[RMDB]
RNA sequence: GGGAACGACUCGAGUAGAGUCGAAAAGCGCAGCUCAUUGGCCCUGCAGGCAGCGUCCUCUUUGGCAUCUACCUCACGAUUGGAGACUGGGUCAAAGGAACGCCAUCGUACGUUACACCGGCACGCACAAAGAUAGAUGUUUCGACAUCUAUCUUUGAAAAGAAACAACAACAACAAC
Reactivity to DMS in 0.01 (KOAc 150mM, MgCl2 10mM, bicine 150mM(pH8.5), 24C), signal-to-noise 9, nucleotides 027 to 126: g020c060g010c050a050g010c040u000c050a140u000u010g010g010c030c030c030u000g010c080a080g000g020c080a100g010c040g010u000c020c020u010c040u000u000u000g010g010c020a060u010c030u000a110c090c010u000c050a100c200g010a180u010u010g010g000a050g000a110c110u000g010g010g000u000c030a030a040a050g010g010a040a030c050g010c020c050a070u010c080g010u000a060c110g010u010u010a070c090a100c050c020g000g010c040a060c090g010c120a190
Reactivity to 2A3 in 0.01 (KOAc 150mM, MgCl2 10mM, bicine 150mM(pH8.5), 24C), signal-to-noise 9, nucleotides 027 to 126: g030c040g000c040a030g000c010u020c040a090u050u120g050g020c000c000c020u040g030c060a040g050g000c020a020g020c010g030u050c010c010u080c000u040u030u030g010g000c020a100u040c020u080a110c020c010u060c020a170c140g300a300u080u220g080g000a030g010a040c060u070g030g030g000u010c020a020a030a010g030g000a040a010c020g000c020c000a070u060c030g040u040a070c040g040u040u050a030c040a020c030c020g030g000c050a020c060g040c010a050